[RMDB]
Conditions: 150 mM KOAc, 10 mM MgCl2 and 150 mM bicine (pH 8.5), 24 C. This 207-nucleotide RNA was probed chemically with 2A3 and DMS. Reactivities are given for positions 27 through 156. The 2A3 profile rests on 17,187 reads. 2A3 adducts were read by reverse transcription with SuperScript II with manganese. The data come from the RNA Mapping Database (RMDB), library OK3TST. DMS adducts were read by reverse transcription with MarathonRT. High 2A3 reactivity points to a flexible backbone, as in loops and unpaired stretches.
RNA sequence: GGGAACGACUCGAGUAGAGUCGAAAACGAUCAGUACGUUCGCGUACUGAUCGAAGCUACUGGAGACAGUAGCAAGUCUAAGACCUUGUUAAGGGGAAACAAGGAAAAAUGGAGGAAGGACGGACCUCCAUACUUAGACAACCCCUAACCGUCCAAAUAUUACGUAUCGUUUCGACGAUACGUAAUAAAAAGAAACAACAACAACAAC
Reactivity to 2A3 in 0.01 (KOAc 150mM, MgCl2 10mM, bicine 150mM(pH8.5), 24C), signal-to-noise 5, nucleotides 027 to 156: c010g000a000u000c000a000g000u000a010c010g020u040u080c260g000c000g100u000a000c000u000g000a000u000c000g000a000a000g000c000u000a000c000u010g010g030a040g000a030c000a000g000u000a000g000c000a000a020g000u000c000u000a000a030g010a180c000c000u010u010g010u030u070a240a260g010g000g000g020a010a010a010c000a000a000g040g000a060a090a030a040a020u030g000g000a010g020g020a090a270g020g000a010c020g000g040a100c000c000u000c000c000a000u010a010c000u000u000a000g000a000c010a030a140c020c000c000c000u030a020a020c000c000g000u000c000c000a010a020a000
Reactivity to DMS in 0.01 (KOAc 150mM, MgCl2 10mM, bicine 150mM(pH8.5), 24C), signal-to-noise 1, nucleotides 027 to 156: c020g010a000u000c000a000g040u000a020c010g030u040u020c300g030c000g000u000a000c030u020g000a020u010c020g000a000a090g020c010u000a010c000u010g000g000a300g020a300c000a020g010u000a010g010c000a020a060g010u000c010u000a000a020g030a300c000c000u000u000g020u030u000a040a080g010g000g200g000a260a150a000c020a030a040g000g040a030a050a060a090a170u000g040g000a030g000g000a010a020g020g000a020c000g040g000a300c010c000u000c010c000a000u010a010c060u010u000a040g020a010c000a080a180c010c020c000c150u000a000a040c000c010g030u010c000c080a080a060a300